[RMDB]
RNA sequence: GGGAACGACUCGAGUAGAGUCGAAAAAUGAUUUCGGUGGUGCUUUUGCCAUGGGUGCCAUUGGUGGUGUUGUUUGGCAUGGGAUUAAAGGUUUUAGAAAUGGAAAAAAGUCAGCAAAAACAAGAAACAUAGCUGAUAAUUUCGAUUAUCAGCUAUGAAAAGAAACAACAACAACAAC
Reactivity to 2A3 in 0.01 (KOAc 150mM, MgCl2 10mM, bicine 150mM(pH8.5), 24C), signal-to-noise 3, nucleotides 027 to 126: a000u170g050a080u040u050u110c030g030g000u040g030g000u020g020c010u050u060u110u070g060c010c010a060u070g080g000g000u050g020c100c040a040u010u060g000g000u080g090g000u030g020u010u170g070u020u060u090g070g030c100a110u030g000g040g000a040u050u060a050a040a000g180g030u090u090u080u110a090g010a040a210a030u050g060g070a070a110a000a000a000a000g060u110c040a000g000c050a110a000a000a000a070c050a040a040g030a030a000a020
Reactivity to DMS in 0.01 (KOAc 150mM, MgCl2 10mM, bicine 150mM(pH8.5), 24C), signal-to-noise 4, nucleotides 027 to 126: a060u020g010a090u010u020u010c020g000g030u010g000g000u010g000c020u000u010u000u030g010c040c030a060u020g010g020g020u000g000c040c040a090u020u010g000g020u010g000g000u000g000u000u000g000u010u000u000g000g000c030a080u010g000g000g000a070u010u030a040a080a090g010g000u010u010u010u010a070g020a050a080a050u010g010g010a000a040a060a030a050a090g010u010c050a050g010c130a040a040a050a050a050c110a070a090g000a130a080a080

This 177-nucleotide RNA was probed chemically with 2A3 and DMS.
The data come from the RNA Mapping Database (RMDB), library OK1LIB.
The reactions ran in a buffer of 150 mM KOAc, 10 mM MgCl2 and 150 mM bicine (pH 8.5), at 24 C.
Reactivities are given for positions 27 through 126.